RNA sequence: GGGAACGACUCGAGUAGAGUCGAAAACGCACCAGCGGACAGUCUCUGAGACAACGGUGCGUCGGUGUCACAGGCAACACCGUUGGUUUUUGAGAAUUUUCAUAGCGUCGUCCGAUUGAAUUGACGGCCAAGAGUAGAUAUUCGUAUCUACUCUUGGAAAAGAAACAACAACAACAAC
Reactivity to 2A3 in 0.01 (KOAc 150mM, MgCl2 10mM, bicine 150mM(pH8.5), 24C), signal-to-noise 9, nucleotides 027 to 126: c040g000c020a040c020c010a020g030c020g030g020a030c020a050g060u030c020u000c000u080g060a040g000a040c010a020a010c020g030g000u070g050c040g020u020c010g010g050u090g080u100c080a060c050a160g020g020c010a080a020c010a030c020c000g000u000u010g060g030u010u030u020u080u090g080a080g020a090a100u100u110u090u110c070a080u100a110g050c030g040u030c020g010u010c030c030g050a080u060u140g040a080a110u090u090g020a030c020g030g020
Reactivity to DMS in 0.01 (KOAc 150mM, MgCl2 10mM, bicine 150mM(pH8.5), 24C), signal-to-noise 9, nucleotides 027 to 126: c080g020c110a100c050c040a090g010c050g000g000a060c120a140g000u000c040u000c040u010g000a050g010a020c010a020a040c020g010g010u000g020c190g020u000c020g010g010u000g010u000c100a100c070a080g000g010c040a090a110c060a020c000c000g010u000u000g010g010u000u000u000u000u000g010a050g020a080a120u010u010u010u000c070a070u010a130g010c050g010u000c050g010u000c010c040g000a180u010u010g000a070a110u010u000g000a070c080g010g000
The data come from the RNA Mapping Database (RMDB), library OK2TST. Chemical mapping of a 177-nucleotide RNA with 2A3 and DMS. For 2A3 the reverse transcriptase was SuperScript II with manganese. The reactions ran in a buffer of 150 mM KOAc, 10 mM MgCl2 and 150 mM bicine (pH 8.5), at 24 C.